[RMDB]
RNA sequence: GGGAACGACUCGAGUAGAGUCGAAAAAAAAAGAUAUGGAAAUGAUGCACUUGGAUUUAUGGGAUUCCCACCAUUCGGAAACGAAUGGUGCAUCCCAUUGUCAGUGUUUCAUUUCCUAAGUCAAAAAGUUAUUUACGAUGUUCGCAUCGUAAAUAACAAAAGAAACAACAACAACAAC
Reactivity to DMS in 0.01 (KOAc 150mM, MgCl2 10mM, bicine 150mM(pH8.5), 24C), signal-to-noise 2, nucleotides 027 to 126: a030a010a030a060a050g010a040u000a300u000g000g000a010a010a010u000g000a020u000g000c000a010c010u000u010g010g010a020u000u010u010a000u010g030g000g010a050u000u010c300c300c010a020c010c000a000u000u000c000g020g010a120a110a150c000g030a010a000u000g000g010u010g060c130a000u000c010c000c000a000u000u000g010u000c010a000g020u010g010u000u000u000c000a030u000u000u000c000c000u000a000a060g000u000c050a080a040a080a160a110
Reactivity to 2A3 in 0.01 (KOAc 150mM, MgCl2 10mM, bicine 150mM(pH8.5), 24C), signal-to-noise 2, nucleotides 027 to 126: a030a020a000a040a020g090a050u160a120u140g010g000a000a010a000u010g010a010u010g000c000a000c040u140u220g300g010a060u300u300u150a030u080g000g000g000a010u060u070c000c020c010a000c000c000a000u000u010c000g010g020a080a050a080c000g010a010a000u000g000g020u000g020c000a000u000c000c000c000a010u000u010g000u000c000a000g000u000g020u010u010u000c010a010u000u000u010c000c000u000a010a000g050u010c060a060a000a150a040a040